[RMDB]
RNA sequence: GGGAACGACUCGAGUAGAGUCGAAAAGUCCGGGGCAUGCCGCUUCAAGGAACUGGCCAGCAUGCGAACCAGCAUUGCCAGUUCCUGGGUGCGUUGUCCCUCGGCGCGGCCGAUGUCGUAGAACGGACAGCCCAAGUAUGUUCGCAUACUUGGGCUGAAAAGAAACAACAACAACAAC
Reactivity to DMS in 0.01 (KOAc 150mM, MgCl2 10mM, bicine 150mM(pH8.5), 24C), signal-to-noise 3, nucleotides 027 to 126: g010u000c020c010g030g020g050g020c140a020u010g030c170c030g020c010u010u000c040a090a010g010g010a040a010c010u000g000g020c040c300a090g010c250a040u000g010c040g010a110a220c210c200a160g070c040a030u000u000g010c000c000a010g000u000u000c000c000u000g010g000g020u010g010c030g000u000u000g020u000c130c010c010u000c000g000g010c040g020c090g010g000c000c070g010a090u000g010u000c030g020u010a100g010a270a130c070g010g000a210
Reactivity to 2A3 in 0.01 (KOAc 150mM, MgCl2 10mM, bicine 150mM(pH8.5), 24C), signal-to-noise 1, nucleotides 027 to 126: g050u030c010c020g000g070g010g000c010a050u050g030c000c030g010c020u150u140c130a110a060g000g000a000a000c000u000g000g010c030c030a070g160c030a050u040g000c020g060a140a220c100c030a080g000c000a050u000u090g000c000c010a020g000u010u020c010c000u010g000g000g030u020g000c070g000u000u010g030u060c010c000c000u000c010g040g030c010g000c010g060g010c020c030g050a080u210g020u070c020g040u020a040g020a170a010c010g000g070a040
Chemical mapping of a 177-nucleotide RNA with DMS and 2A3.
High DMS reactivity at an A or C suggests that its Watson-Crick edge is free.
For 2A3, 1,522 sequencing reads were counted.
Source: RMDB library OK2TST, as collected in RNAgym.
The RNA was probed in 150 mM KOAc, 10 mM MgCl2 and 150 mM bicine (pH 8.5) at 24 C.